RNA sequence: GGGAACGACUCGAGUAGAGUCGAAAAAAAGUGAUAGUCUUGUACACGUAAGAAUAUUAAUCGUAGUAGUAUCCUGAGUACCACGGAGCACGUGAAAUUCUGUGGGAAUCUGUCAGAACCAUCUGAUGGGUAUUAAACAUUUCGAUGUUUAAUACCCAAAAGAAACAACAACAACAAC
Reactivity to 2A3 in 0.01 (KOAc 150mM, MgCl2 10mM, bicine 150mM(pH8.5), 24C), signal-to-noise 4, nucleotides 027 to 126: a000a000a010g130u130g000a060u020a000g040u010c000u020u080g040u090a030c020a010c040g050u070a150a020g090a140a090u190a090u280u260a080a100u090c080g020u020a090g000u010a000g000u020a160u160c020c000u030g020a040g010u040a010c020c020a000c000g000g010a020g010c070a050c240g150u180g100a050a070a030u050u000c000u010g000u000g000g010g000a010a010u030c000u000g000u000c000a000g040a070a080c040c010a070u030c000u010g040a040u000
Reactivity to DMS in 0.01 (KOAc 150mM, MgCl2 10mM, bicine 150mM(pH8.5), 24C), signal-to-noise 3, nucleotides 027 to 126: a050a070a050g010u040g020a030u000a020g010u020c020u010u000g010u000a020c070a050c100g030u040a110a110g000a060a060u020a080u010u000a060a120u010c080g020u010a130g010u000a070g020u000a020u050c020c000u020g000a030g020u000a140c010c000a020c020g000g010a030g030c160a070c140g000u040g010a090a020a080u040u000c010u010g000u020g000g020g000a030a060u000c030u000g000u000c020a030g000a100a120c100c100a070u020c000u010g000a300u000
Background:
Chemical mapping of a 177-nucleotide RNA with 2A3 and DMS. It was measured as part of the RMDB libraries RFM100 and RFMREP. The RNA was probed in 150 mM KOAc, 10 mM MgCl2 and 150 mM bicine (pH 8.5) at 24 C. For DMS the reverse transcriptase was MarathonRT.